[RMDB]
RNA sequence: GGGAACGACUCGAGUAGAGUCGAAAAAGCUCUUCGGAGCUGUAUUCACCUUUGUGGUUGUGGAGCCUUAACAGUCGACCACGUCCCAUUGGGACGUGGAGAACGACUGUCCAGGCGUUGAAACAACCACUCUGGUAGCGUGGUAUUUCGAUACCAAGGAUACCACGUAUUUCGAUACGUGGUAUCCAAAAGAAACAACAACAACAAC
Reactivity to DMS in 0.01 (KOAc 150mM, MgCl2 10mM, bicine 150mM(pH8.5), 24C), signal-to-noise 1, nucleotides 027 to 156: a030g000c000u000c000u000u000c300g050g020a040g030c000u000g000u000a080u000u000c040a070c000c000u000u010u000g030u000g010g030u000u000g050u000g020g000a300g010c010c010u000u010a030a010c000a020g000u000c000g000a170c000c010a020c000g000u000c000c010c030a300u010u020g050g060g050a040c000g050u010g000g000a010g010a130a140c000g010a040c000u000g010u000c000c110a030g010g030c000g020u000u000g010a190a150a040c010a040a030c000c000a000c000u000c010u000g010g060u000a080g040c060g020u000g010g020u000a080u000u000u030c110g010a180u000a110c040c040a030a300
Reactivity to 2A3 in 0.01 (KOAc 150mM, MgCl2 10mM, bicine 150mM(pH8.5), 24C), signal-to-noise 3, nucleotides 027 to 156: a000g010c020u010c000u040u140c270g130g010a000g020c020u020g000u010a140u060u220c030a030c020c000u000u010u030g000u000g000g030u000u000g000u010g010g050a000g030c010c010u010u020a000a010c000a000g010u010c000g040a300c020c000a010c000g000u010c020c000c030a250u270u300g000g000g000a000c000g020u010g000g000a000g000a020a010c000g000a000c000u000g000u000c010c070a000g000g000c020g030u080u030g000a020a000a000c000a010a010c010c000a000c000u000c000u000g020g010u030a050g120c090g100u080g000g030u030a030u040u230u120c230g070a020u030a040c000c010a020a050

Structure probing data (DMS and 2A3) for a 207-nucleotide construct. It was measured as part of the RMDB library RNAMAK. For DMS the reverse transcriptase was MarathonRT. The RNA was probed in 150 mM KOAc, 10 mM MgCl2 and 150 mM bicine (pH 8.5) at 24 C. For DMS, 3,210 sequencing reads were counted.